[RMDB]
RNA sequence: GGGAACGACUCGAGUAGAGUCGAAAAGAAAGGGUGCAGGUGAUGAGAAGCAAGACAGGGACAUCAGAUCUCCUUCCGUGGGGAGUGAUCGACUAAAGUCUCAAUGGGAAUCUCUCUGAUGCAUUAAACGAGUGGGACAAUUCGUUGUCCCACUCGUAAAAGAAACAACAACAACAAC
Reactivity to DMS in 0.01 (KOAc 150mM, MgCl2 10mM, bicine 150mM(pH8.5), 24C), signal-to-noise 2, nucleotides 027 to 126: g000a130a120a120g000g030g070u000g030c000a030g000g020u030g000a040u020g030a040g000a040a070g070c140a090a020g000a070c010a180g000g000g010a180c250a040u020c060a060g020a080u000c020u010c100c000u000u010c110c170g000u060g000g000g000g000a000g010u000g000a060u000c030g000a200c160u010a020a110a140g000u000c010u010c030a080a040u010g000g020g000a160a140u060c030u020c010u000c040u000g000a080u020g010c000a090u000u000a000a070
Reactivity to 2A3 in 0.01 (KOAc 150mM, MgCl2 10mM, bicine 150mM(pH8.5), 24C), signal-to-noise 2, nucleotides 027 to 126: g150a040a050a000g180g000g050u030g020c000a000g000g200u090g070a030u080g050a010g050a070a050g040c050a090a000g040a030c050a050g020g010g000a040c040a030u160c070a000g000a050u010c040u060c000c050u110u070c110c080g080u160g000g050g000g070a050g010u040g130a050u020c000g040a080c040u210a070a070a070g030u030c000u000c010a030a090u080g090g010g100a080a070u000c010u000c030u000c000u000g020a080u000g000c020a010u020u100a040a300